The record gives the reactivity of an RNA of 177 nucleotides to 2A3 and DMS. Values cover nucleotides 27 to 126. The RNA was probed in 150 mM KOAc, 10 mM MgCl2 and 150 mM bicine (pH 8.5) at 24 C. DMS (dimethyl sulfate) methylates the pairing face of unpaired adenines and cytosines.
RNA sequence: GGGAACGACUCGAGUAGAGUCGAAAAGGUGGAGAUGCCAUGCCGACCCGAAGAGGAAGAAGAGGACAUGGACGCGAACCGUGAGUGGAACCCUCGAUCCUUUAUUGGGGGGUACACUCGAGGAGUGCCCGAGGAAUAUGUUCGCAUAUUCCUCGGGAAAAGAAACAACAACAACAAC
Reactivity to 2A3 in 0.01 (KOAc 150mM, MgCl2 10mM, bicine 150mM(pH8.5), 24C), signal-to-noise 1, nucleotides 027 to 126: g000g030u040g000g020a140g000a100u090g070c020c010a040u040g000c020c000g070a090c000c010c000g040a090a070g070a050g130g020a090a050g040a060a050g060a110g000g020a010c020a030u070g000g000a050c010g000c020g040a000a000c000c020g040u070g010a010g000u020g040g070a130a090c010c010c010u020c010g040a090u080c040c150u260u170u170a110u010u020g040g000g000g010g020g000u010a020c000a010c000u000c010g010a070g020g000a090g100u160g020
Reactivity to DMS in 0.01 (KOAc 150mM, MgCl2 10mM, bicine 150mM(pH8.5), 24C), signal-to-noise 1, nucleotides 027 to 126: g000g040u010g010g010a200g000a060u010g000c000c000a000u000g000c040c020g000a140c020c040c000g040a260a120g010a090g000g010a120a050g010a150a100g010a120g010g000a070c050a020u010g000g000a090c080g020c090g000a090a040c040c060g010u010g000a020g010u010g020g000a140a300c000c000c000u000c000g000a030u000c300c160u000u010u010a000u000u000g000g000g000g000g010g030u000a100c030a010c000u000c000g000a090g030g000a110g000u000g010